[RMDB]
RNA sequence: GGGAACGACUCGAGUAGAGUCGAAAAAACGCUUCACAACCUGAAAGAAGCGCCUGUUAGCAGGACGGUUGAUCCAUUUACCGGUGCAGACCUCUGCAAACACCGGGUUGCAGAACAUCGCGACGGACAAGGGAGGAUACCUUCGGGUAUCCUCCAAGAGAGAGAUAAGGUUCGCCUUAUCUCUCUCAAAAGAAACAACAACAACAAC
Reactivity to 2A3 in 0.01 (KOAc 150mM, MgCl2 10mM, bicine 150mM(pH8.5), 24C), signal-to-noise 3, nucleotides 027 to 156: a000a000c000g040c000u010u010c020a060c000a080a050c020c010u000g010a000a010a000g000a010a000g000c000g030c000c000u100g020u130u150a090g090c020a000g000g020a020c030g000g000u020u010g020a100u040c050c050a060u090u160u110a080c010c010g030g010u050g020c020a030g030a160c010c050u070c020u030g070c030a040a020a020c070a030c050c040g170g080g030u000u050g000c020a010g020a100a040c000a060u120c050g000c030g030a020c000g010g020a040c080a110a130g080g000g000a000g000g000a000u000a000c000c010u030u110c160g120g000g000u000a000u000c000c000u000c000c000a000a000
Reactivity to DMS in 0.01 (KOAc 150mM, MgCl2 10mM, bicine 150mM(pH8.5), 24C), signal-to-noise 1, nucleotides 027 to 156: a050a030c010g030c010u000u000c010a180c060a030a300c010c020u000g010a140a190a170g000a070a050g030c000g030c020c070u000g010u000u000a080g030c000a060g000g020a100c040g020g030u010u010g000a190u010c060c040a150u010u020u000a060c010c010g000g000u000g020c010a060g040a020c070c070u010c000u000g000c030a100a060a030c000a180c080c080g000g020g070u010u000g000c040a000g020a020a170c110a070u000c020g010c030g000a070c100g000g000a180c070a100a190g000g010g090a070g000g030a030u010a000c000c000u000u000c210g070g020g020u000a000u010c000c000u000c000c000a000a030

An RNA of 207 nucleotides, treated with 2A3 and DMS and read out base by base. 2A3 adducts were read by reverse transcription with SuperScript II with manganese. The RNA was probed in 150 mM KOAc, 10 mM MgCl2 and 150 mM bicine (pH 8.5) at 24 C. The 2A3 profile rests on 1,956 reads. For DMS, 1,645 sequencing reads were counted. Source: RMDB library M2RFPK, as collected in RNAgym.